[RMDB]
RNA sequence: GGGAACGACUCGAGUAGAGUCGAAAAAUAGUACAAGGGGAGAUGCUAGGAGUCAGGGGAAGCCAGAACGACUGAGAAAGAAAAGAGAGCAACGGGGCUAGCUGCCGGGUGUUCCAUCCAUGGGAUCGUACUUCGACGUUCGCGUCGAAGAAAAGAAACAACAACAACAAC
Reactivity to 2A3 in 0.01 (KOAc 150mM, MgCl2 10mM, bicine 150mM(pH8.5), 24C), signal-to-noise 2, nucleotides 027 to 129: a000u070a000g030u020a020c020a070a070g020g010g040g000a010g010a030u040g050c000u110a000g010g020a010g080u100c070a010g000g010g000g010a030a000g050c000c010a060g040a050a080c050g040a020c020u050g070a070g020a060a020a000g020a000a000a000a000g090a000g000a010g010c010a040a060c000g000g000g090g000c030u000a020g040c010u040g020c000c000g010g000g000u040g010u050u030c000c010a050u000c000c000a020u000g040g050g000a000u040c020g000u050a000